[RMDB]
RNA sequence: GGGAACGACUCGAGUAGAGUCGAAAACGACGUAGUUUCGACUACGUCGACAGGGAUACGAGCCAAGUGGCGCCGACCACUUAAAAACACCGGAAAAUAAAAGAGCCCGUACUUUCGAGUACGGGAACUUUAAAGAUCAGUUCGCUGAUCUUUAAAGAAAAGAAACAACAACAACAAC
Reactivity to DMS in 0.01 (KOAc 150mM, MgCl2 10mM, bicine 150mM(pH8.5), 24C), signal-to-noise 2, nucleotides 027 to 126: c010g000a010c000g020u000a010g010u000u000u010c170g020a020c000u000a000c000g010u000c000g000a060c150a050g000g010g010a100u000a080c110g000a100g010c050c050a090a020g010u000g000g000c000g000c000c000g020a140c000c000a000c000u000u020a000a000a010a000a010c110a000c020c000g000g000a050a150a090a150u010a040a080a110a170g020a180g040c000c000c000g000u010a010c000u000u000u010c160g010a010g000u000a000c000g010g010g010a010a000
Reactivity to 2A3 in 0.01 (KOAc 150mM, MgCl2 10mM, bicine 150mM(pH8.5), 24C), signal-to-noise 2, nucleotides 027 to 126: c010g000a000c000g000u010a010g010u010u090u090c200g100a030c000u010a000c000g000u020c000g000a010c010a050g060g020g040a020u050a260c140g030a040g050c000c010a020a000g000u010g030g000c050g050c030c000g270a300c010c000a020c020u250u200a030a030a000a010a000c070a010c010c000g020g040a100a150a020a030u060a040a130a030a050g090a040g110c010c000c010g040u000a020c010u010u040u090c260g090a020g000u000a000c010g000g010g010a000a010